[RMDB]
RNA sequence: GGGAACGACUCGAGUAGAGUCGAAAAUUUAUGAGGAGACAAGCAGUGGAGAGAGAACAAUACCCUCUUGAACCAGACUGCCACAAAGGAGAGGGAAAACUCAGUUUUCAGAUAUCUAGAAUGUGUUGACUACUGGGUUGAGUAGUCUUUUGUCCAAUAAUCCUGAUUUAUUCGUAAAUCAGGAUUAAAAAGAAACAACAACAACAAC
Reactivity to DMS in 0.01 (KOAc 150mM, MgCl2 10mM, bicine 150mM(pH8.5), 24C), signal-to-noise 4, nucleotides 027 to 156: u010u000u000a100u010g010a130g010g010a120g010a090c040a070a120g000c030a070g040u000g000g000a140g010a160g010a050g010a070a110c040a100a150u010a230c050c010c010u000c020u010u010g000a170a180c060c060a140g010a070c040u010g010c010c030a150c050a060a080a140g020g000a050g010a110g010g000g020a030a050a030a020c030u000c030a050g020u000u000u000u000c030a060g000a080u000a080u010c070u000a140g010a070a140u000g040u000g010u000u010g020a030c010u000a030c010u010g020g020g010u000u000g010a090g020u000a120g010u000c000u010u000u000u000g000u000c020c020a060a220
Reactivity to 2A3 in 0.01 (KOAc 150mM, MgCl2 10mM, bicine 150mM(pH8.5), 24C), signal-to-noise 3, nucleotides 027 to 156: u130u120u060a100u120g010a020g040g010a030g010a060c030a050a000g000c000a030g010u020g060g000a040g000a000g000a000g020a050a030c050a050a080u180a200c010c040c010u000c010u030u040g010a060a010c010c000a010g030a110c030u030g030c030c000a030c050a030a080a010g080g000a060g000a010g000g020g050a020a050a030a030c080u080c010a010g000u000u000u070u050c010a030g030a120u050a080u110c060u090a050g080a180a100u110g050u010g020u040u110g030a000c000u000a010c010u040g080g050g000u020u030g020a020g020u060a010g000u000c000u010u070u020u030g070u000c010c020a010a020